[RMDB]
RNA sequence: GGGAACGACUCGAGUAGAGUCGAAAAUAAUGAAUUAGUUUUUGGUUAUGCAGAAAAACCAGAUCAACAUAAGUGUGGUCAUGUAAUAGAAUUAGAUGAUGGUAACUAUGCAAUUCAACCCAACAAUAGACUAAGGAUCUUUGAUCCAUCUAUGGCAAAGAGUUCAGUUUUUCGAAACUGAACUCUUAAAAGAAACAACAACAACAAC
Reactivity to DMS in 0.01 (KOAc 150mM, MgCl2 10mM, bicine 150mM(pH8.5), 24C), signal-to-noise 2, nucleotides 027 to 156: u000a120a130u000g070a040a080u000u000a100g020u000u000u010u010u000g010g030u000u000a090u010g070c050a210g020a080a060a070a090a120c040c000a050g000a070u000c030a130a080c030a070u000a040a060g000u000g010u020g020g020u030c010a000u010g020u010a000a080u000a130g000a040a300u000u000a030g010a070u000g030a030u000g010g010u000a080a070c010u000a030u000g000c030a050a100u000u000c010a060a110c040c040c010a090a010c020a050a030u010a030g000a090c090u000a080a090g020g010a030u000c000u000u000u020g000a040u000c000c020a190u010c000u020a020u010g050g040c080a040
Reactivity to 2A3 in 0.01 (KOAc 150mM, MgCl2 10mM, bicine 150mM(pH8.5), 24C), signal-to-noise 2, nucleotides 027 to 156: u090a000a070u050g010a010a020u050u040a150g030u040u030u040u110u090g030g000u020u050a110u180g170c050a060g100a110a150a020a020a000c000c000a000g010a010u080c060a000a070c030a060u160a210a090g030u090g020u010g270g000u010c010a010u030g050u080a070a030u040a130g200a140a120u100u070a090g100a130u150g000a030u030g090g010u010a010a010c020u050a020u050g000c000a010a030u010u000c000a000a040c010c060c010a030a010c010a000a120u010a010g010a010c040u110a160a170g010g000a000u000c050u080u130u260g020a000u000c000c010a000u000c000u010a010u020g030g000c000a050
Source: RMDB library OK3TST, as collected in RNAgym. This 207-nucleotide RNA was probed chemically with DMS and 2A3. The DMS profile rests on 1,996 reads. 2A3 adducts were read by reverse transcription with SuperScript II with manganese. Conditions: 150 mM KOAc, 10 mM MgCl2 and 150 mM bicine (pH 8.5), 24 C.